[RMDB]
RNA sequence: GGGAACGACUCGAGUAGAGUCGAAAACGCUGCCGAAGCGAAGUCGUUCGCCGCGGCUGUCCAACAGUGCCAGUCCGACUUGAUCGCGUCGAUCAUGGGCAGUCGCAGUGUCACAACGGAAAACGACCUGCUGUCCGUGGAAGAACGCGCGCUGCUCUCAGCAUGAUUAGUUCGCUAAUCAUGCUGAAAAAGAAACAACAACAACAAC
Reactivity to DMS in 0.01 (KOAc 150mM, MgCl2 10mM, bicine 150mM(pH8.5), 24C), signal-to-noise 3, nucleotides 027 to 156: c040g010c020u010g030c020c040g020a140a130g010c030g020a090a080g020u000c080g040u000u010c030g040c000c040g030c010g020g000c000u000g000u030c030c030a050a100c080a090g010u010g020c020c040a190g020u000c060c000g000a100c040u000u000g010a100u000c020g030c130g030u000c040g010a140u000c010a100u000g020g020g000c000a050g000u000c020g030c060a040g000u000g000u000c040a130c090a200a300c080g020g000a060a060a110a100c020g020a100c030c000u000g000c000u020g000u000c010c010g010u020g000g030a070a080g000a060a070c010g030c000g030c080g010c030u000g000c010u000c060
Reactivity to 2A3 in 0.01 (KOAc 150mM, MgCl2 10mM, bicine 150mM(pH8.5), 24C), signal-to-noise 6, nucleotides 027 to 156: c050g010c020u050g030c040c060g110a070a010g050c010g030a030a010g060u050c020g020u010u030c050g050c130c010g000c020g010g000c010u020g030u030c040c010a070a050c060a190g070u120g120c020c020a020g040u050c020c020g030a080c070u080u140g050a080u110c020g010c040g050u040c030g030a100u050c010a040u030g000g000g000c010a000g030u040c050g010c010a010g000u060g030u060c040a030c050a170a110c170g150g040a080a060a030a030c080g010a030c000c020u050g000c010u020g020u000c000c010g000u030g050g000a150a090g010a070a020c010g000c000g000c020g040c030u090g010c000u020c010

This 207-nucleotide RNA was probed chemically with DMS and 2A3. DMS (dimethyl sulfate) methylates the pairing face of unpaired adenines and cytosines. The data come from the RNA Mapping Database (RMDB), library OK3TST.